[RMDB]
Chemical mapping of a 207-nucleotide RNA with 2A3 and DMS.
For DMS, 10,506 sequencing reads were counted.
For 2A3, 4,585 sequencing reads were counted.
The reactions ran in a buffer of 150 mM KOAc, 10 mM MgCl2 and 150 mM bicine (pH 8.5), at 24 C.
RNA sequence: GGGAACGACUCGAGUAGAGUCGAAAAUUAGAUAGUUGAACGAGACACUGCUCCAAAGAUGUUGUUCCGAAUCGGAGGGUAAAGCGGUGCAGGUUAAAUCGGAAAUAGUUUGGGUAUGCCUCGCUGCCCAAAUGAAAUUUAGAGGAUAAGGCAUUGGCAUAAGAUAUAACUUCGGUUAUAUCUUAUGAAAAGAAACAACAACAACAAC
Reactivity to 2A3 in 0.01 (KOAc 150mM, MgCl2 10mM, bicine 150mM(pH8.5), 24C), signal-to-noise 5, nucleotides 027 to 156: u140u060a040g070a110u070a060g080u080u180g080a120a040c060g020a040g040a050c020a000c030u040g000c010u020c030c010a020a030a020g020a020u050g010u150u150g010u090u000c010c000g010a000a020u030c020g010g000a030g010g010g010u180a190a190a010g030c020g010g000u040g020c040a010g000g080u120u160a060a120a040u050c010g000g000a000a020a020u020a010g010u000u010u000g020g000g000u020a030u120g060c010c010u020c050g000c010u000g000c010c010c000a000a000a000u000g000a000a020a000u150u160u060a040g000a020g030g020a050u050a080a040g060g000c110a080u050u110g060g000
Reactivity to DMS in 0.01 (KOAc 150mM, MgCl2 10mM, bicine 150mM(pH8.5), 24C), signal-to-noise 4, nucleotides 027 to 156: u010u000a080g010a150u000a070g020u000u000g010a100a070c060g010a230g000a170c030a110c030u000g000c030u000c020c050a040a180a180g000a080u000g020u010u010g000u000u000c020c010g010a090a080u000c050g020g010a300g000g000g030u010a060a090a090g010c050g030g030u000g030c030a180g010g010u000u000a030a080a080u000c020g000g000a040a040a050u000a170g020u000u000u000g010g010g030u000a050u000g030c040c040u000c060g020c180u000g000c000c000c000a010a010a030u010g000a060a060a140u000u000u000a080g010a070g020g010a160u000a060a050g010g020c050a080u000u000g020g020